An RNA of 177 nucleotides, treated with 2A3 and DMS and read out base by base. For 2A3, 2,260 sequencing reads were counted. For DMS, 7,746 sequencing reads were counted. DMS adducts were read by reverse transcription with MarathonRT. Values cover nucleotides 27 to 126. It was measured as part of the RMDB library TTRDES. Reactivities are rounded to 0.1 and cut off at 0 and 3.

RNA sequence: GGGAACGACUCGAGUAGAGUCGAAAAGAUAUGGAGACCAAUAGGCAAUGAUGUAUCUCAACUCGGAAACGAGUUGAGGAUAUUGAGCCUGAUGGUCUCCUAAGUCAAAAGGCCUGUUCGCAGGCCACAUAAAAAGGGGGUUCGCCCCCUUUUUAUGAAAAGAAACAACAACAACAAC
Reactivity to 2A3 in 0.01 (KOAc 150mM, MgCl2 10mM, bicine 150mM(pH8.5), 24C), signal-to-noise 1, nucleotides 027 to 126: g020a020u010a010u170g000g000a000g000a010c000c010a040a060u090a090g010g000c000a080a210u300g120a100u260g200u080a120u040c000u000c000a000a000c000u010c010g010g020a070a030a090c010g000a020g020u000u010g020a000g000g010a000u000a010u030u150g050a020g000c000c030u020g020a040u010g000g000u000c000u000c000c000u010a000a000g010u000c020a120a130a000a130g020g000c000c010u010g070u060u040c300g010c080a010g000g000c000c000a020
Reactivity to DMS in 0.01 (KOAc 150mM, MgCl2 10mM, bicine 150mM(pH8.5), 24C), signal-to-noise 6, nucleotides 027 to 126: g000a040u000a300u000g010g010a010g010a010c000c000a050a180u000a010g010g030c010a100a200u010g010a080u010g010u000a030u010c000u010c000a010a010c000u000c000g020g000a060a090a200c000g010a010g020u000u000g000a020g000g010a000u000a000u000u000g010a300g010c010c000u000g010a090u000g000g000u000c000u000c000c000u010a000a070g010u000c040a070a080a130a120g010g010c000c000u000g010u000u010c200g020c010a010g020g010c000c000a020